RNA sequence: GGGAACGACUCGAGUAGAGUCGAAAAGAUAUGGACUGUAGGGAGAGCCUAUCGGAAACGAUAGAAGCUCAUCGAUCUACUGUCCUAAGUCAAAAGCCUGCCGCCUUGUUCGCAAGGCGGCAGGCAAUCAUAACGUAUUGUUCGCAAUACGUUAUGAAAAAGAAACAACAACAACAAC
Reactivity to DMS in 0.01 (KOAc 150mM, MgCl2 10mM, bicine 150mM(pH8.5), 24C), signal-to-noise 1, nucleotides 027 to 126: g000a010u000a010u000g010g000a020c010u000g000u000a000g000g000g000a000g010a030g010c010c000u000a000u000c000g020g010a020a000a020c000g010a020u000a000g000a140a180g000c000u010c000a210u000c150g000a080u010c000u000a000c000u000g000u000c000c000u000a010a090g010u010c010a120a100a170a130g010c010c000u000g000c010c000g000c020c000u020u010g000u000u000c170g020c000a050a010g010g000c000g010g000c000a000g000g010c010a020a010
Reactivity to 2A3 in 0.01 (KOAc 150mM, MgCl2 10mM, bicine 150mM(pH8.5), 24C), signal-to-noise 1, nucleotides 027 to 126: g000a010u010a000u050g010g000a000c010u020g000u020a010g000g000g010a000g000a000g000c000c000u000a010u010c000g020g000a010a000a000c000g000a010u000a000g120a190a050g060c000u020c010a030u300c010g000a000u000c010u010a010c010u020g010u000c010c010u000a010a000g010u010c000a080a020a110a150g030c010c010u020g070c030c020g180c010c030u110u030g070u140u130c280g020c170a010a000g000g040c000g020g080c030a000g000g020c000a000a000
The record gives the reactivity of an RNA of 177 nucleotides to DMS and 2A3.
For 2A3 the reverse transcriptase was SuperScript II with manganese.
Reactivities are given for positions 27 through 126.
The reactions ran in a buffer of 150 mM KOAc, 10 mM MgCl2 and 150 mM bicine (pH 8.5), at 24 C.